RNA sequence: GGGAACGACUCGAGUAGAGUCGAAAACACACAACCGGCUUACGUCGAGUUUGUGCGAGUCCGAGCUCGCGGGGGACUCGCCUUGAGGGACGCCUCCGCUAUACGCCUACUGAGAUGGAACGUGUCGUGACCGCAGUACAUUCGUGUACUGCGGUCAAAAAGAAACAACAACAACAAC
Reactivity to 2A3 in 0.01 (KOAc 150mM, MgCl2 10mM, bicine 150mM(pH8.5), 24C), signal-to-noise 2, nucleotides 027 to 126: c030a000c000a010c000a000a080c020c000g000g000c000u110u250a040c070g080u000c000g040a060g080u020u090u100g080u070g040c000g000a000g010u070c050c040g020a010g000c040u030c070g050c040g030g050g000g000g030a050c010u010c050g060c000c000u120u160g090a150g030g050g040a000c040g000c000c010u020c040c010g000c020u010a060u020a100c040g020c000c000u040a070c030u120g090a000g000a160u130g070g020a130a030c020g060u010g030u060c010g060
Reactivity to DMS in 0.01 (KOAc 150mM, MgCl2 10mM, bicine 150mM(pH8.5), 24C), signal-to-noise 2, nucleotides 027 to 126: c080a080c080a050c050a050a040c040c020g010g010c020u000u010a140c200g020u000c000g000a070g000u000u000u000g010u000g010c000g010a030g010u020c030c030g020a220g000c030u000c110g000c000g040g040g000g000g000a160c080u010c050g010c010c010u000u020g020a120g000g010g020a120c220g030c030c000u000c000c030g000c040u010a100u000a070c110g000c020c010u010a210c070u000g000a230g020a100u000g000g000a030a140c100g000u010g020u000c100g010